Record summary: Structure probing data (2A3 and DMS) for a 177-nucleotide construct. 2A3 adducts were read by reverse transcription with SuperScript II with manganese. Conditions: 150 mM KOAc, 10 mM MgCl2 and 150 mM bicine (pH 8.5), 24 C. It was measured as part of the RMDB libraries RFM100 and RFMREP. Reactivities are given for positions 27 through 126.
RNA sequence: GGGAACGACUCGAGUAGAGUCGAAAACGGUAGUCCAGUGGUAAUUUCAGUAUAAGAAGGAAAUCACCAUAUUGCAGAUCCGAGGUGAACGCUAUGUUUUAACUAUCUAACACGGAGUUGGAGUGAUUUUGGUUAUAGAGUUCGCUCUAUAACCAAAAAAAGAAACAACAACAACAAC
Reactivity to 2A3 in 0.01 (KOAc 150mM, MgCl2 10mM, bicine 150mM(pH8.5), 24C), signal-to-noise 2, nucleotides 027 to 126: c020g010g100u100a040g050u000c040c000a020g000u030g040g020u020a000a090u110u160u000c000a080g090u000a260u150a210a000g060a090a060g100g000a000a000a000u040c000a000c000c000a010u040a050u100u300g000c000a050g060a070u030c000c020g020a110g000g000u030g000a040a000c000g000c080u160a110u150g010u060u070u060u130a000a000c000u030a070u070c000u040a050a070c010a020c100g070g020a020g000u010u160g000g000a090g000u060g020a060u000
Reactivity to DMS in 0.01 (KOAc 150mM, MgCl2 10mM, bicine 150mM(pH8.5), 24C), signal-to-noise 5, nucleotides 027 to 126: c040g000g000u000a040g020u010c030c070a090g030u000g000g010u000a040a020u020u010u020c010a140g010u010a160u020a110a080g010a160a130g000g010a010a030a010u000c040a010c020c030a030u010a080u020u010g020c090a060g000a060u010c040c030g010a130g000g000u010g010a040a050c060g010c090u010a030u020g000u020u010u000u020a070a100c090u000a080u010c040u010a060a050c080a130c110g010g000a180g030u000u000g010g010a140g000u020g000a110u010